[RMDB]
RNA sequence: GGGAACGACUCGAGUAGAGUCGAAAAUAUCUUGGCGAGGGGAAACCCAGGGUAGCUCCCAUCUGAGUACGUCGCAUCCUAACAUGCCAAUCCGGAGAAUGGGGUGAAACUCCUCUGAAAUCCGGUGGCGUGCGAGAUAAUUCGUUAUCUCGCACGCAAAAGAAACAACAACAACAAC
Reactivity to 2A3 in 0.01 (KOAc 150mM, MgCl2 10mM, bicine 150mM(pH8.5), 24C), signal-to-noise 1, nucleotides 027 to 126: u050a010u000c010u000u040g020g000c120g000a080g000g030g050g110a130a030a010c030c000c020a000g000g020g000u020a010g000c030u070c000c010c000a040u030c080u110g040a060g040u000a030c010g020u000c040g000c020a030u010c000c010u060a070a040c030a080u020g050c000c030a040a020u000c000c000g020g000a000g040a010a020u150g040g020g000g000u000g000a020a000a000c060u110c040c000u000c000u010g010a030a030a000u000c000c000g030g010u040g000
Reactivity to DMS in 0.01 (KOAc 150mM, MgCl2 10mM, bicine 150mM(pH8.5), 24C), signal-to-noise 1, nucleotides 027 to 126: u030a050u010c100u030u010g000g030c030g000a150g000g010g000g000a020a020a250c120c000c000a160g000g020g020u000a050g000c150u000c040c000c000a040u060c090u000g020a010g050u030a080c010g000u000c050g000c040a150u020c000c000u000a030a050c210a120u040g020c000c000a080a040u000c000c010g000g000a050g000a300a100u010g000g000g000g010u000g000a010a020a060c000u000c000c000u000c030u000g000a040a300a130u000c000c010g020g040u000g000
This 177-nucleotide RNA was probed chemically with 2A3 and DMS. Reactivities are given for positions 27 through 126. For 2A3 the reverse transcriptase was SuperScript II with manganese. The 2A3 profile rests on 811 reads.